[RMDB]
Chemical mapping of a 177-nucleotide RNA with 2A3 and DMS. For DMS the reverse transcriptase was MarathonRT. Source: RMDB library TTRDES, as collected in RNAgym. The 2A3 profile rests on 8,813 reads. In probing experiments dimethyl sulfate is read out at A N1 and C N3, which are open when not base-paired.

RNA sequence: GGGAACGACUCGAGUAGAGUCGAAAAGAUAUGGACCAUCAACGGGAGAUGAAUGUCGGAAACGACAUCCAUCAUCGAUCGUUAUGGUCCUAAGUCAAAAGGAAGGUAUCCUUCGGGAUACCUUCCACAAGACUGCAAGGUUCGCCUUGCAGUCUUGAAAAGAAACAACAACAACAAC
Reactivity to 2A3 in 0.01 (KOAc 150mM, MgCl2 10mM, bicine 150mM(pH8.5), 24C), signal-to-noise 3, nucleotides 027 to 126: g000a000u030a020u070g000g010a000c000c000a010u080c140a020a010c020g020g110g110a300g010a030u000g000a000a030u010g020u010c000g000g020a020a020a020c000g000a000c000a000u010c030c010a010u000c010a030u290c180g150a260u030c000g000u000u010a010u000g010g000u010c000c000u000a000a000g000u000c000a030a040a070a120g010g010a000a000g000g020u000a000u010c000c000u100u150c300g060g000g000a000u000a000c000c000u010u000c000c010a010
Reactivity to DMS in 0.01 (KOAc 150mM, MgCl2 10mM, bicine 150mM(pH8.5), 24C), signal-to-noise 3, nucleotides 027 to 126: g010a000u000a070u020g000g000a030c010c000a010u000c260a010a020c000g030g000g010a240g020a000u000g000a020a010u000g000u000c000g020g000a010a010a040c000g010a020c000a000u000c020c010a010u000c000a250u010c300g010a100u000c000g000u000u000a010u010g000g000u000c000c010u000a000a030g000u000c000a120a060a100a120g020g020a020a010g010g000u000a000u000c000c000u000u020c230g010g010g000a010u000a000c000c000u000u000c000c000a020